This 177-nucleotide RNA was probed chemically with DMS and 2A3. For 2A3 the reverse transcriptase was SuperScript II with manganese. The RNA was probed in 150 mM KOAc, 10 mM MgCl2 and 150 mM bicine (pH 8.5) at 24 C. For DMS the reverse transcriptase was MarathonRT. The data come from the RNA Mapping Database (RMDB), library OK2TRN.
[RMDB]
RNA sequence: GGGAACGACUCGAGUAGAGUCGAAAACAUCAUCAAUCUUGGCGGUUUACCAAGCAGACACUCUGAUAUUUGCUACACACGCAACAUUUUUGAGAACGAUAAUCAUCUGGUCUGGAACUUUGAGUUCCCCACUUUCUACGUUCGCGUAGAAAGUGGGAAAAGAAACAACAACAACAAC
Reactivity to DMS in 0.01 (KOAc 150mM, MgCl2 10mM, bicine 150mM(pH8.5), 24C), signal-to-noise 2, nucleotides 027 to 126: c110a050u010c070a070u000c060a040a080u010c020u010u000g000g020c100g000g000u000u000u000a120c050c040a140a060g000c110a050g000a070c110a200c030u010c060u000g010a060u000a070u010u000u030g020c000u000a100c170a100c200a060c110g000c030a020a030c130a070u000u000u010u000u000g000a090g000a070a140c040g040a090u000a020a060u000c060a030u000c070u000g000g010u000c060u000g020g000a040a040c080u010u000u010g000a100g010u000u000c030
Reactivity to 2A3 in 0.01 (KOAc 150mM, MgCl2 10mM, bicine 150mM(pH8.5), 24C), signal-to-noise 3, nucleotides 027 to 126: c010a080u140c010a020u040c020a180a000u030c030u030u050g040g020c080g100g150u090u060u080a070c010c000a060a000g030c000a010g010a040c000a020c060u040c010u040g070a030u040a070u110u050u030g000c020u100a070c100a010c000a020c130g060c020a060a020c030a110u030u110u060u080u160g060a090g020a100a030c030g020a030u120a070a120u180c060a020u010c060u060g010g050u030c010u010g010g040a030a010c040u070u080u140g040a070g040u040u020c000